Chemical mapping of a 207-nucleotide RNA with 2A3. Reactivities are given for positions 27 through 156. The 2A3 profile rests on 707 reads.

RNA sequence: GGGAACGACUCGAGUAGAGUCGAAAAUGGCAAUGGAGAUGAGAUAGAGACGGUGAAGGAGAUGGUUUGGAGACGGUGAAAGAGAUGGUGAUGGAAGAACGGCGGCAGAGAGAAGACAAGUUGUGAAACCCUAAUGACGUGUCCCACCAAAUCACAACCGGGUAUUUACGUUCGCGUAAAUACCCGGAAAAGAAACAACAACAACAAC
Reactivity to 2A3 in 0.01 (KOAc 150mM, MgCl2 10mM, bicine 150mM(pH8.5), 24C), signal-to-noise 1, nucleotides 027 to 156: u020g000g000c010a000a020u100g090g000a020g020a050u080g010a000g030a070u050a040g100a000g010a060c030g020g010u010g020a030a000g070g010a060g010a080u100g000g070u050u020u040g030g000a050g010a020c100g060g000u030g060a060a070a050g060a010g000a080u050g010g000u060g010a060u020g030g040a000a020g030a020a010c010g010g000c000g000g000c010a010g080a000g000a000g000a080a000g010a020c040a060a020g010u030u060g040u030g050a100a080a040c000c000c000u090a140a130u050g040a050c040g040u030g040u040c020c010c000a000c020c010a090a170a040u170c030a060c020a120a090